Background: Chemical mapping of a 207-nucleotide RNA with 2A3. For 2A3 the reverse transcriptase was SuperScript II with manganese. The RNA was probed in 150 mM KOAc, 10 mM MgCl2 and 150 mM bicine (pH 8.5) at 24 C. Reactivities are given for positions 27 through 156.
RNA sequence: GGGAACGACUCGAGUAGAGUCGAAAAUUCAAUCACCUCUAGCUUUGGGAGUUUCUGAACCCAUGAGACAUUCUUCAGCUUGUUGCAGUGUGAAAUGUUUAUGCAACGGAUAUUCCGCAGACAAUCUUGGCUUACAGAAUUUCCCCACACUCUGGUAAGUGCAUGAUAGGUUCGCCUAUCAUGCACUAAAAGAAACAACAACAACAAC
Reactivity to 2A3 in 0.01 (KOAc 150mM, MgCl2 10mM, bicine 150mM(pH8.5), 24C), signal-to-noise 1, nucleotides 027 to 156: u090u000c000a000a130u060c020a040c030c080u000c040u080a020g000c050u120u020u010g070g010g000a060g020u060u000u000c050u090g100a080a070c080c030c010a070u040g000a010g010a010c010a060u100u030c010u030u010c010a060g010c010u120u210g090u160u090g060c090a030g030u030g070u020g230a000a050a120u140g040u000u180u010a040u030g090c030a060a010c020g010g030a030u060a080u150u080c020c050g000c030a040g040a180c010a020a100u100c000u030u030g070g000c030u090u020a050c060a000g100a060a030u030u000u000c000c000c000c000a030c000a010c040u040c010u000g000g020u040a090